The data come from the RNA Mapping Database (RMDB), library OK1LIB. Structure probing data (DMS and 2A3) for a 177-nucleotide construct. Values cover nucleotides 27 to 126. For DMS the reverse transcriptase was MarathonRT.
RNA sequence: GGGAACGACUCGAGUAGAGUCGAAAAACUCGACUCUUACCUUGGCGACAAGGUAAGAUAGACGAGGAGCAUAUAUAGGGGUUGAAACGCAGUCCUUCGCGCAGAAAAUAUAUAGGCGCUCAUGUACAAAUAAAUAAAAAUUCGUUUUUAUUUAUUUAAAAGAAACAACAACAACAAC
Reactivity to DMS in 0.01 (KOAc 150mM, MgCl2 10mM, bicine 150mM(pH8.5), 24C), signal-to-noise 2, nucleotides 027 to 126: a120c020u010c000g000a140c070u020c000u000u000a010c010c000u000u000g000g000c300g020a200c000a000a000g000g010u000a000a000g000a030u040a020g000a150c010g000a010g000g010a120g000c040a050u000a020u050a070u000a040g040g010g000g000u000u000g000a110a090a070c140g000c020a110g000u000c030c020u000u010c090g000c020g000c070a100g010a100a070a070a090u020a060u020a070u000a110g020g000c070g000c020u010c030a040u020g000u060a070c050
Reactivity to 2A3 in 0.01 (KOAc 150mM, MgCl2 10mM, bicine 150mM(pH8.5), 24C), signal-to-noise 1, nucleotides 027 to 126: a000c000u000c020g010a010c010u010c000u000u000a000c000c000u000u000g010g040c020g010a050c020a000a000g000g020u000a000a030g000a000u050a020g060a020c060g000a000g010g030a040g150c100a070u060a000u050a010u090a210g040g000g000g000u060u050g060a140a030a030c040g000c050a010g040u050c000c000u090u100c080g000c010g000c030a020g200a180a120a030a020u220a000u060a000u040a090g140g040c020g020c080u070c040a070u190g020u100a070c040